[RMDB]
RNA sequence: GGGAACGACUCGAGUAGAGUCGAAAACGCAUAUGUAAUAGUCAGACCAGCAGAGGAGACUUCUGCAUGAAGGAUAUUGUACAAUGCGAUAGAUUGAGUUUCCUUGGUCUCUGUAUUAUCCACUCACAUUAGCCAUGGUCCUAAUUAGAUCGGACGACAACCUACUCGGAUUCGUCCGAGUAGGUUGAAAAGAAACAACAACAACAAC
Reactivity to DMS in 0.01 (KOAc 150mM, MgCl2 10mM, bicine 150mM(pH8.5), 24C), signal-to-noise 2, nucleotides 027 to 156: c070g050c030a100u010a070u000g020u010a060a060u000a070g010u000c070a110g030a090c040c050a130g010c030a140g020a080g030g000a090g010a110c040u000u000c070u000g010c040a150u000g010a100a130g000g040a290u000a040u040u000g040u010a050c080a070a090u000g010c000g020a130u000a080g000a200u010u010g000a090g000u000u000u010c030c020u000u000g010g020u000c090u010c040u000g010u010a060u000u000a060u000c090c040a090c050u000c060a070c080a090u000u000a150g020c050c020a090u010g030g050u000c000c010u000a100a140u000u000a060g000a100u000c020g000g000a060c010g040a230
Reactivity to 2A3 in 0.01 (KOAc 150mM, MgCl2 10mM, bicine 150mM(pH8.5), 24C), signal-to-noise 4, nucleotides 027 to 156: c020g000c010a040u130a140u190g020u040a050a030u020a110g120u050c090a010g040a090c010c010a000g030c020a020g020a010g110g040a060g040a090c020u100u060c040u090g000c030a100u060g040a040a040g050g030a030u080a060u100u120g040u010a050c010a040a040u030g000c030g050a040u080a100g090a100u030u270g050a080g030u040u010u010c010c000u010u050g010g000u030c030u000c030u120g080u070a130u110u090a020u130c080c030a060c080u060c040a040c050a090u120u130a030g020c010c020a050u070g060g000u000c000c000u050a140a140u090u070a060g030a130u110c040g000g020a010c010g010a020
An RNA of 207 nucleotides, treated with DMS and 2A3 and read out base by base. For 2A3 the reverse transcriptase was SuperScript II with manganese. The DMS profile rests on 2,875 reads. The data come from the RNA Mapping Database (RMDB), library OK3TST. Conditions: 150 mM KOAc, 10 mM MgCl2 and 150 mM bicine (pH 8.5), 24 C.